[RMDB]
RNA sequence: GGGAACGACUCGAGUAGAGUCGAAAAACAUUGGCCUUCGGGCCAAUGUACUGGAAAUAAAGCCCAAAGGCUACGCAUUCCUUAUUUGGCGAAAGCCUGCGAGAUUAUGUAAGUUCGCUUACAUAAAGAAAUUAUUCACAUUCGUGUGAAUAAUUUCAAAAGAAACAACAACAACAAC
Reactivity to 2A3 in 0.01 (KOAc 150mM, MgCl2 10mM, bicine 150mM(pH8.5), 24C), signal-to-noise 4, nucleotides 027 to 126: a030c000a000u000u000g000g000c000c010u030u030c260g050g010g000c000c000a000a000u000g000u000a000c020u040g050g160a020a080a110u190a120a110a000g020c020c020c000a030a070a020g020g000c010u060a010c030g000c030a080u110u170c020c000u190u200a270u220u210u170g070g000c030g020a140a020a010g020c000c000u000g000c070g040a180g020a060u020u060a000u030g000u010a000a010g010u010u100c190g000c070u000u010a000c000a010u030a010a080a050
Reactivity to DMS in 0.01 (KOAc 150mM, MgCl2 10mM, bicine 150mM(pH8.5), 24C), signal-to-noise 4, nucleotides 027 to 126: a030c000a010u000u010g000g010c000c010u000u000c230g030g000g040c000c000a010a010u000g000u000a040c120u000g030g000a070a080a090u000a050a140a160g000c030c000c050a040a160a050g010g000c020u010a160c060g010c030a140u010u000c090c080u010u000a140u000u010u010g010g010c010g010a140a110a130g010c000c000u010g020c240g000a110g010a150u000u000a000u000g000u000a010a010g010u000u010c230g010c010u000u000a000c010a000u000a000a030a110
Notes:
Structure probing data (2A3 and DMS) for a 177-nucleotide construct. Conditions: 150 mM KOAc, 10 mM MgCl2 and 150 mM bicine (pH 8.5), 24 C. For 2A3, 4,048 sequencing reads were counted. For DMS, 3,201 sequencing reads were counted. Source: RMDB library M2PK50, as collected in RNAgym.